Chemical mapping of a 170-nucleotide RNA with 2A3 and DMS.
For DMS, 12,818 sequencing reads were counted.
2A3 adducts were read by reverse transcription with SuperScript II with manganese.
The reactions ran in a buffer of 150 mM KOAc, 10 mM MgCl2 and 150 mM bicine (pH 8.5), at 24 C.
For DMS the reverse transcriptase was MarathonRT.
It was measured as part of the RMDB library 15KLIB.
[RMDB]
RNA sequence: GGGAACGACUCGAGUAGAGUCGAAAACAUCCUUUUCUUACCUUUUGGCCGGCAUGGCCCCAGCCUCCUCGCUGGCGCCGGCUGGGCAACGAUCCGAGGGGACUAUCCCUCUCGAGAAUCGGCAAAUAAAGGAGUGAGUUCGCUCACUCCAAAAGAAACAACAACAACAAC
Reactivity to 2A3 in 0.01 (KOAc 150mM, MgCl2 10mM, bicine 150mM(pH8.5), 24C), signal-to-noise 9, nucleotides 027 to 129: c040a110u050c000c000u070u080u080u070c070u100u150a200c040c050u070u070u050u110g130g020c000c000g040g000c030a190u180g030g000c000c000c000c000a000g000c000c020u180c030c020u120c120g000c010u000g000g030c000g000c000c000g020g010c000u010g020g000g000c020a070a070c000g000a010u000c020c000g010a000g010g020g010g010a000c050u120a120u260c020c010c000u010c000u000c010g240a250g030a070a070u030c010g010g020c060a040a070a060u180a060a110a020
Reactivity to DMS in 0.01 (KOAc 150mM, MgCl2 10mM, bicine 150mM(pH8.5), 24C), signal-to-noise 2, nucleotides 027 to 129: c170a090u000c000c000u000u000u000u000c070u030u040a000c050c010u020u020u000u010g000g000c040c010g000g070c000a070u050g070g000c000c000c000c000a040g030c010c090u080c030c040u030c160g040c000u020g020g070c200g040c040c000g040g060c050u040g010g000g120c040a010a000c000g030a000u040c000c010g020a020g050g000g010g030a120c170u120a070u090c120c010c000u000c010u060c000g050a110g040a140a000u010c020g030g030c130a050a060a070u000a020a040a040